[RMDB]
RNA sequence: GGGAACGACUCGAGUAGAGUCGAAAAGGGGUCAAGCGAGGGUUUCGACAUGAGCCACACUGAAGCCUCCACGGUGUUGCUCAACAGCGAAACCUCCCCACCGCUUGACGGAGGCACCCAAAACUCAAGCAUACCCGUUCGCGGGUAUGCUUGAGAACAUUAAUUGUAACUUCGGUUACAAUUAAUGAAAAGAAACAACAACAACAAC
Reactivity to DMS in 0.01 (KOAc 150mM, MgCl2 10mM, bicine 150mM(pH8.5), 24C), signal-to-noise 2, nucleotides 027 to 156: g010g010g040g030u000c040a030a020g030c000g040a250g000g010g010u000u000u000c010g070a120c070a180u000g030a040g000c000c050a040c020a060c000u000g000a060a090g010c010c010u000c020c020a300c060g000g010u000g020u000u000g000c000u030c000a090a110c100a110g000c000g000a020a030a030c000c000u040c300c030c030c040a300c070c020g040c020u000u000g010a040c010g000g000a030g070g040c000a070c010c010c010a060a080a130a140c000u000c050a030a000g020c000a000u000a000c000c040c000g000u000u010c300g000c050g010g000g000u010a000u000g000c010u020u010g000a020g010a030a190
Reactivity to 2A3 in 0.01 (KOAc 150mM, MgCl2 10mM, bicine 150mM(pH8.5), 24C), signal-to-noise 4, nucleotides 027 to 156: g120g010g060g010u020c010a010a000g000c010g000a020g020g020g010u010u000u000c120g050a230c170a300u270g000a000g010c010c020a000c000a000c000u040g020a160a020g020c000c000u000c000c000a010c010g000g020u010g000u000u010g000c000u000c040a170a140c080a150g040c020g010a010a000a000c000c010u040c030c000c000c010a020c010c010g000c000u000u000g000a010c010g000g010a000g010g000c000a030c010c020c000a020a130a100a110c000u000c000a000a000g000c000a000u010a010c000c000c030g030u120u200c300g010c010g080g000g010u000a000u000g000c000u000u000g000a000g000a000a000